[RMDB]
RNA sequence: GGGAACGACUCGAGUAGAGUCGAAAAACCGCGAGGAGGUGGAGAUGCCAUGCCGACCCGAAGAGGAAGAAGAGGACAUGGACGCGAACCGUGAGUGGAACCCUCGAUCCUUUAUUGGGGGGUACACCCUACGUAUAGUGUUCGCACUAUACGUAGGAAAAGAAACAACAACAACAAC
Reactivity to 2A3 in 0.01 (KOAc 150mM, MgCl2 10mM, bicine 150mM(pH8.5), 24C), signal-to-noise 4, nucleotides 027 to 126: a000c010c010g010c050g030a060g040g030a020g000g030u070g030g040a110g000a050u100g050c030c010a020u040g020c010c020g050a070c030c000c020g080a130a050g040a050g070g010a050a070g040a050a010g060a090g020g000a020c010a020u060g010g010a020c020g000c030g040a020a000c020c000g020u060g040a030g010u020g010g030a090a030c000c010c000u010c010g030a080u100c030c070u140u230u100a070u070u110g000g010g000g000g000g000u030a010c010a000c010
Reactivity to DMS in 0.01 (KOAc 150mM, MgCl2 10mM, bicine 150mM(pH8.5), 24C), signal-to-noise 5, nucleotides 027 to 126: a110c040c000g000c100g020a090g010g010a100g020g030u010g010g000a110g000a080u000g010c030c040a060u000g010c030c030g000a130c020c010c020g020a050a080g010a080g020g000a080a060g010a080a100g010a120g000g010a090c050a060u010g000g010a100c080g000c040g000a070a090c070c060g000u020g010a130g010u000g000g000a180a170c040c010c010u000c010g010a050u010c220c160u000u010u010a090u020u000g000g000g000g000g000g000u000a130c060a050c060